Description: Structure probing data (2A3 and DMS) for a 177-nucleotide construct. The reactions ran in a buffer of 150 mM KOAc, 10 mM MgCl2 and 150 mM bicine (pH 8.5), at 24 C.

RNA sequence: GGGAACGACUCGAGUAGAGUCGAAAAUGCGCAAGCAGGUGAUAGAGCGGCUGCACACACUGGCGGACGAGGCGGCAGCAACGCUGGCGCCGAUUGCGCGGCCGAUGUGGUGGCUGGACCCCGCAGACAAAAUACCACCUUUCGAGGUGGUAUUUUGAAAAGAAACAACAACAACAAC
Reactivity to 2A3 in 0.01 (KOAc 150mM, MgCl2 10mM, bicine 150mM(pH8.5), 24C), signal-to-noise 2, nucleotides 027 to 126: u090g000c030g000c030a040a050g020c030a060g020g120u060g080a100u100a190g150a030g090c030g040g000c020u040g020c040a040c000a010c030a010c260u060g020g000c050g060g070a070c030g010a080g030g020c040g050g020c010a010g000c030a080a180c140g000c010u020g140g030c020g000c000c020g050a070u010u120g080c300g000c000g040g000c000c000g020a050u030g000u050g000g000u020g000g080c010u030g020g060a090c010c000c010c030g020c020a010g020a070
Reactivity to DMS in 0.01 (KOAc 150mM, MgCl2 10mM, bicine 150mM(pH8.5), 24C), signal-to-noise 4, nucleotides 027 to 126: u000g010c020g020c140a080a110g000c030a040g010g020u000g000a130u000a090g010a130g010c020g020g000c010u000g000c010a130c050a060c040a040c060u010g010g010c020g010g020a240c030g020a180g010g020c040g000g000c000a020g000c020a080a110c240g020c010u000g020g010c030g000c030c000g000a090u000u010g030c050g020c090g010g020c020c000g000a030u010g020u000g010g000u000g000g010c010u000g010g010a150c050c010c010c040g020c130a070g000a270
DMS adducts were read by reverse transcription with MarathonRT. It was measured as part of the RMDB library OK2TRN. The DMS profile rests on 3,986 reads.